[RMDB]
RNA sequence: GGGAACGACUCGAGUAGAGUCGAAAAUACCAUUUGAGUAUCCUGAAAACGGGCUUUUCAGCAUGGAACGUACAUAUUAAAUAGUAGGAGUGCAUAGUGGCCCGUAUAGCAGGCAUUAACAUUCCUGAAAACGUGAAAAGGUUCGCCUUUUCACGAACGUCUAAUUAUCGUUCGCGAUAAUUAGACGAAAAGAAACAACAACAACAAC
Reactivity to 2A3 in 0.01 (KOAc 150mM, MgCl2 10mM, bicine 150mM(pH8.5), 24C), signal-to-noise 3, nucleotides 027 to 156: u060a000c020c020a100u160u060u070g120a100g030u070a060u130c020c010u020g050a000a050a010a020c010g000g010g000c020u080u090u120u120c050a020g000c000a020u050g020g110a140a040c030g080u050a010c040a030u230a090u200u300a090a210a110u170a070g030u000a010g000g110a070g020u020g000c020a070u050a180g100u050g010g020c000c000c000g020u020a000u010a010g010c000a000g000g010c000a000u030u000a030a020c010a070u030u110c000c000u020g060a070a080a060a070c020g000u000g010a000a000a000a010g000g020u050u060c100g120c000c000u000u000u020u000c000a000c010g000a000a000
Reactivity to DMS in 0.01 (KOAc 150mM, MgCl2 10mM, bicine 150mM(pH8.5), 24C), signal-to-noise 2, nucleotides 027 to 156: u010a120c000c000a140u030u010u000g060a180g020u010a070u000c030c010u020g000a060a070a080a070c020g050g040g050c070u010u010u000u010c060a300g010c050a030u010g010g020a170a120c070g010u000a140c120a110u000a140u000u000a080a070a270u000a120g020u000a050g010g010a160g000u000g000c040a090u010a120g030u020g030g000c020c000c030g000u000a020u000a120g020c020a020g000g030c090a040u010u000a070a130c040a110u000u000c010c000u010g000a040a060a140a190c030g020u000g000a030a010a030a020g020g020u000u020c300g000c040c000u030u000u000u020c000a030c000g000a010a020
Source: RMDB library M2RFPK, as collected in RNAgym. Structure probing data (2A3 and DMS) for a 207-nucleotide construct. High DMS reactivity at an A or C suggests that its Watson-Crick edge is free. The RNA was probed in 150 mM KOAc, 10 mM MgCl2 and 150 mM bicine (pH 8.5) at 24 C. The DMS profile rests on 2,604 reads.